[RMDB]
RNA sequence: GGGAACGACUCGAGUAGAGUCGAAAAAAUGUAAUCGGCAGUCCCUUGACUCGGAAUGCGGUAUUAACAUGUCUCAGAUGUUAAGCACUGUUGCACUACAAAGGAUGUCAUUCGCCUUUUUUUUUCCGUUUGACAGGCUGUUCGCAGCCUGUCAAACAAAAGAAACAACAACAACAAC
Reactivity to 2A3 in 0.01 (KOAc 150mM, MgCl2 10mM, bicine 150mM(pH8.5), 24C), signal-to-noise 1, nucleotides 027 to 126: a020a000u250g040u130a030a040u010c090g010g000c040a010g100u130c000c040c000u020u030g210a260c030u010c040g020g000a050a000u010g000c000g000g010u000a000u000u030a020a000c000a030u030g300u020c040u030c140a080g000a060u010g000u090u000a000a030g010c040a120c060u020g040u070u050g000c020a030c030u040a020c080a000a140a000g010g000a020u020g060u000c040a040u000u030c020g020c010c030u100u090u000u000u000u000u000u000u100c000c070